[RMDB]
RNA sequence: GGGAACGACUCGAGUAGAGUCGAAAAGAUAUGGACCUAUCUAAGAGCGAGGAUCACCCGGGUCGGAAACGACCCGGUGGGAGCUCUGUAGGUCCUAAGUCAAAACGUCAGUACUUCGGUACUGACGGCUAUUGACCAGGUUCGCCUGGUCAAUAGCAAAAGAAACAACAACAACAAC
Reactivity to DMS in 0.01 (KOAc 150mM, MgCl2 10mM, bicine 150mM(pH8.5), 24C), signal-to-noise 3, nucleotides 027 to 126: g010a040u000a070u020g000g010a010c000c000u000a010u020c300u020a300a050g010a020g010c010g020a080g030g020a030u010c000a020c080c100c140g000g000g000u010c000g020g010a030a010a040c010g000a000c000c010c010g000g010u000g020g000g000a020g010c000u000c000u010g000u010a020g010g010u010c000c000u000a000a060g010u010c010a100a040a110a300c010g000u000c000a000g020u000a010c000u000u020c250g010g010u000a000c000u000g000a000c000g010
Reactivity to 2A3 in 0.01 (KOAc 150mM, MgCl2 10mM, bicine 150mM(pH8.5), 24C), signal-to-noise 2, nucleotides 027 to 126: g000a000u030a010u010g000g000a000c000c010u010a020u240c160u300a300a050g010a000g000c040g040a300g040g020a020u000c010a020c080c140c080g020g030g010u000c000g000g000a010a000a000c010g010a000c010c000c050g010g010u020g000g000g000a010g000c000u010c030u020g000u010a020g000g000u000c010c000u010a020a000g000u010c000a040a030a000a180c010g000u000c000a000g000u000a000c010u040u220c300g120g000u000a000c000u010g020a000c000g000